Source: RMDB libraries RFM100 and RFMREP, as collected in RNAgym. The record gives the reactivity of an RNA of 177 nucleotides to DMS and 2A3.
RNA sequence: GGGAACGACUCGAGUAGAGUCGAAAAAUAGACCAGGAGAAAGAACUCCUUGAGAAGUUGGCGUGGCGAACAGAGGCAGUCUUAGCGACGGACGUCACUUCCUUCUUGUUACUUAAAUUGCUGGGGGCAUAGGACUCCUCUUCGGAGGAGUCCUAUGAAAAGAAACAACAACAACAAC
Reactivity to DMS in 0.01 (KOAc 150mM, MgCl2 10mM, bicine 150mM(pH8.5), 24C), signal-to-noise 3, nucleotides 027 to 126: a110u010a040g040a230c010c030a040g020g000a020g000a160a100a070g020a110a010c010u000c000c010u000u000g010a030g010a040a020g010u020u000g000g020c300g000u020g000g010c020g010a060a140c070a060g000a250g000g000c060a070g010u030c040u030u020a160g000c060g000a090c110g000g020a260c010g010u010c030a040c040u010u030c010c000u000u000c040u000u000g010u010u010a080c120u000u020a020a070a060u010u000g000c030u000g000g000g000g010g000
Reactivity to 2A3 in 0.01 (KOAc 150mM, MgCl2 10mM, bicine 150mM(pH8.5), 24C), signal-to-noise 2, nucleotides 027 to 126: a000u130a020g070a060c000c010a000g000g010a030g000a010a160a040g050a040a070c000u030c000c000u040u100g030a060g000a040a010g010u150u100g000g000c000g000u000g000g000c000g010a050a010c040a090g050a130g300g000c100a030g040u080c070u110u160a000g010c010g040a050c040g020g060a020c000g010u010c000a000c030u050u030c070c000u040u070c000u010u050g040u050u030a100c050u060u160a110a110a120u120u060g050c060u000g010g000g000g000g000
Overview: Conditions: 150 mM KOAc, 10 mM MgCl2 and 150 mM bicine (pH 8.5), 24 C. For DMS the reverse transcriptase was MarathonRT.